Notes:
This 207-nucleotide RNA was probed chemically with 2A3.

[RMDB]
RNA sequence: GGGAACGACUCGAGUAGAGUCGAAAAGAUGGGUCCGAUGGAUUAAUGCGUCGCCUGCCAUUGGAUCCUGAUUGAUAGAUUGAAGGCGACGGUCGGAUCACUCGGUAAUUCGGUGCUCCACGAGUGAUCCGUGAUGAUAGUUAAGAUGAGCACCUAAGCAUAGGACUGCAUUCGUGCAGUCCUAUGCAAAAGAAACAACAACAACAAC
Reactivity to 2A3 in 0.01 (KOAc 150mM, MgCl2 10mM, bicine 150mM(pH8.5), 24C), signal-to-noise 1, nucleotides 027 to 156: g170a110u100g000g000g000u020c000c000g000a000u000g000g040a040u110u140a190a070u300g040c030g000u000c000g050c000c000u000g020c000c000a000u000u000g000g000a000u020c000c000u000g030a000u000u160g040a070u070a250g230a030u000u260g110a040a030g000g000c030g000a000c000g000g000u000c000g030g040a000u000c000a000c000u000c010g110g020u230a090a150u120u140c010g020g000u030g000c000u000c000c000a000c000g000a030g000u000g000a000u000c000c000g020u030g000a050u040g000a040u100a300g140u270u180a080a100g060a240u110g010a000g000c000a000c010c000u000a060a060

The 2A3 profile rests on 512 reads. For 2A3 the reverse transcriptase was SuperScript II with manganese.